Structure probing data (2A3 and DMS) for a 207-nucleotide construct. The DMS profile rests on 2,985 reads. Conditions: 150 mM KOAc, 10 mM MgCl2 and 150 mM bicine (pH 8.5), 24 C.
[RMDB]
RNA sequence: GGGAACGACUCGAGUAGAGUCGAAAAAAAGACGCGGUUGCCGAUCGGUAUGGAUGCCACCGUGACGGCUCAAUCACACAAGUGCCAACGAUAACAAGGCGCUCGCUAUUGCUGCGUAACUGACGGCUAGAUACAGCCAGGUUCGCCUGGCUGUAAAUCUCAUUUCUAUCUUCGGAUAGAAAUGAGAAAAAGAAACAACAACAACAAC
Reactivity to 2A3 in 0.01 (KOAc 150mM, MgCl2 10mM, bicine 150mM(pH8.5), 24C), signal-to-noise 3, nucleotides 027 to 156: a000a010a000g090a020c030g020c020g030g010u050u070g050c010c010g030a100u040c020g040g030u090a070u130g150g050a080u120g030c040c000a000c000c010g010u030g040a090c050g030g010c000u040c060a020a060u110c000a020c010a010c020a190a000g020u020g040c000c000a090a010c090g080a110u160a250a030c050a100a030g020g000c010g000c020u030c040g060c060u090a100u160u230g000c030u010g000c010g030u020a110a040c030u060g070a030c030g000g030c020u080a030g000a090u070a010c010a000g010c010c000a000g020g020u010u010c040g030c110c010u000g010g010c000u000g000u000a000a000a000
Reactivity to DMS in 0.01 (KOAc 150mM, MgCl2 10mM, bicine 150mM(pH8.5), 24C), signal-to-noise 2, nucleotides 027 to 156: a060a040a130g010a080c020g020c020g000g030u010u000g010c060c030g010a220u000c020g000g020u000a130u000g000g010a250u020g010c010c060a110c010c010g000u000g010a110c150g000g020c030u000c040a100a060u000c050a110c060a050c060a050a060g040u000g020c010c010a100a190c050g000a210u000a130a200c060a080a140g020g010c030g050c030u000c040g020c010u000a100u000u000g000c000u000g000c030g010u010a120a060c060u010g030a130c090g010g000c060u000a080g000a300u000a040c010a010g040c030c010a030g000g020u000u020c300g010c010c010u000g020g000c010u010g000u010a010a010a090